An RNA of 177 nucleotides, treated with 2A3 and DMS and read out base by base.
RNA sequence: GGGAACGACUCGAGUAGAGUCGAAAAAUAAUACAAUCUUAGAUAUAGAUACGCUAUGCACUGCUAAGGAUAUCUAAAUUGUAUUACAAUCCACGUGGUAGAGUCAUAGUUAGGUUCGCUAUGGUGCUCGAUUUUACCGAUUCGUCGGUAAAAUCGAAAAAGAAACAACAACAACAAC
Reactivity to 2A3 in 0.01 (KOAc 150mM, MgCl2 10mM, bicine 150mM(pH8.5), 24C), signal-to-noise 5, nucleotides 027 to 126: a000u030a000a000u000a010c000a000a010u020c120u020u010a000g000a000u000a000u000a010g080a040u050a030c040g000c000u070a080u300g140c080a130c260u110g000c020u030a040a040g070g000a010u000a000u000c000u000a000a000a010u000u000g000u000a000u010u010a000c010a000a060u000c010c000a060c080g070u090g040g080u100a070g040a040g070u030c030a070u070a030g040u090u060a060g110g080u050u090c020g000c000u010a010u040g090g010u080g060c020
Reactivity to DMS in 0.01 (KOAc 150mM, MgCl2 10mM, bicine 150mM(pH8.5), 24C), signal-to-noise 3, nucleotides 027 to 126: a210u010a000a000u000a010c000a000a010u000c150u000u000a000g000a000u010a000u000a010g000a010u000a090c300g010c000u010a080u010g000c250a140c190u000g020c030u020a190a220g010g000a010u000a000u000c010u030a010a010a000u010u000g030u000a010u000u000a020c110a070a170u020c010c010a050c150g000u010g010g030u010a060g020a050g000u000c000a080u000a050g010u030u000a050g050g010u000u010c040g010c010u000a020u000g000g010u010g000c050
Source information:
It was measured as part of the RMDB libraries RFM100 and RFMREP.